[RMDB]
RNA sequence: GGGAACGACUCGAGUAGAGUCGAAAAGAUAUGGAAUGCGAGGAUCAUGUGUUCACUUUGAUCUCGGAAACGAGGGAGUGAGCCAUGGGAGCAUUCCUAAGUCUAAACCCCCGGUUCGCCGGGGGAACCUGUUGCGUAGGUUCGCCUACGCAACAGGAAAAGAAACAACAACAACAAC
Reactivity to 2A3 in 0.01 (KOAc 150mM, MgCl2 10mM, bicine 150mM(pH8.5), 24C), signal-to-noise 1, nucleotides 027 to 126: g000a030u050a050u190g000g040a000a010u000g000c030g070a300g110g020a050u030c010a010u030g290u050g030u130u030c030a040c030u080u140u260g170a150u090c010u010c050g090g060a160a120a080c030g000a000g000g030g000a030g010u010g000a000g000c000c000a010u010g010g010g000a050g000c030a000u010u050c000c000u000a000a040g000u000c010u060a060a300a300c050c060c020c040c030g000g060u060u090c270g030c060c000g000g000g000g000g000a000a030